[RMDB]
RNA sequence: GGGAACGACUCGAGUAGAGUCGAAAACACUGUAGAGAAACAGGAAGGGAUUUUAUUAAUAAGAAUGACUGGGGUCACACUUAAAACAACAUCAGAUUUUGAUCUCUUCUGGGCUUGGAAAAUGGUUCCCAUACUUAAGUUUCGACUUAAGUAUGGGAAAAGAAACAACAACAACAAC
Reactivity to 2A3 in 0.01 (KOAc 150mM, MgCl2 10mM, bicine 150mM(pH8.5), 24C), signal-to-noise 6, nucleotides 027 to 126: c080a020c020u110g060u100a040g020a010g030a160a160a010c030a020g070g030a010a020g000g010g010a000u010u080u030u080a160u080u090a130a120u090a110a030g100a080a090u070g020a010c050u060g060g020g130g000u030c010a020c000a020c060u060u080a050a070a080a060c090a030a030c010a110u150c030a050g050a190u020u040u110u140g010a020u010c010u000c000u000u030c010u020g000g070g020c050u030u050g080g040a030a060a090a050u090g090g020u010u010
Reactivity to DMS in 0.01 (KOAc 150mM, MgCl2 10mM, bicine 150mM(pH8.5), 24C), signal-to-noise 2, nucleotides 027 to 126: c080a160c100u000g010u000a060g000a150g010a130a080a100c040a190g000g000a050a010g020g000g020a080u000u000u000u030a030u020u000a090a110u020a050a080g010a130a100u030g000a080c030u010g000g000g010g000u000c040a060c190a140c060u000u010a040a030a050a090c150a050a030c160a090u010c070a050g000a090u000u000u020u030g000a030u000c000u000c000u000u010c010u010g000g000g000c080u010u010g010g020a030a090a030a030u030g000g020u010u020